[RMDB]
RNA sequence: GGGAACGACUCGAGUAGAGUCGAAAACGCUGGGAGCCGGGUCGAUGAAAGGGAGUAGCCUGAAGCGCGCACGGGCUACGAAGAACUGGAGACCUGGCUCCUGUGCUGAAGCGCGCACGGCAACCGAAAGGUGCGUUAUUGCUUAUUCGUAAGCAAAACUCUUAGAUACAUUCGUGUAUCUAAGAGUAAAAGAAACAACAACAACAAC
Reactivity to DMS in 0.01 (KOAc 150mM, MgCl2 10mM, bicine 150mM(pH8.5), 24C), signal-to-noise 2, nucleotides 027 to 156: c030g050c010u000g010g000g010a070g070c000c000g020g000g060u000c010g020a260u030g000a120a210a190g020g000g020a300g010u000a030g020c030c010u010g000a020a060g010c020g080c030g000c040a300c020g010g000g010c000u000a000c020g010a170a050g020a090a200c060u000g020g020a260g000a050c020c000u000g040g000c000u000c000c010u000g020u000g000c010u030g020a060a050g010c010g050c000g000c000a210c020g010g020c040a040a100c000c050g040a120a070a150g020g010u000g010c060g000u010u000a030u000u000g010c040u000u000a220u000u000c090g010u000a020a100g000c040a050a040a130
Reactivity to 2A3 in 0.01 (KOAc 150mM, MgCl2 10mM, bicine 150mM(pH8.5), 24C), signal-to-noise 4, nucleotides 027 to 156: c030g000c010u020g010g000g000a010g020c030c010g020g000g000u000c020g060a240u190g180a300a160a150g060g020g020a120g020u000a000g010c020c000u030g040a150a040g020c000g000c000g000c010a010c000g010g000g000c010u000a030c020g030a070a060g050a090a040c040u120g060g060a150g000a160c010c060u060g000g000c000u000c010c000u000g000u000g000c010u010g000a080a010g000c000g010c000g000c000a000c000g010g010c000a020a010c000c000g000a050a030a010g000g000u010g010c000g000u000u080a150u100u050g000c000u020u020a040u090u110c190g080u060a000a010g000c000a010a100a010
Structure probing data (DMS and 2A3) for a 207-nucleotide construct.
The reactions ran in a buffer of 150 mM KOAc, 10 mM MgCl2 and 150 mM bicine (pH 8.5), at 24 C.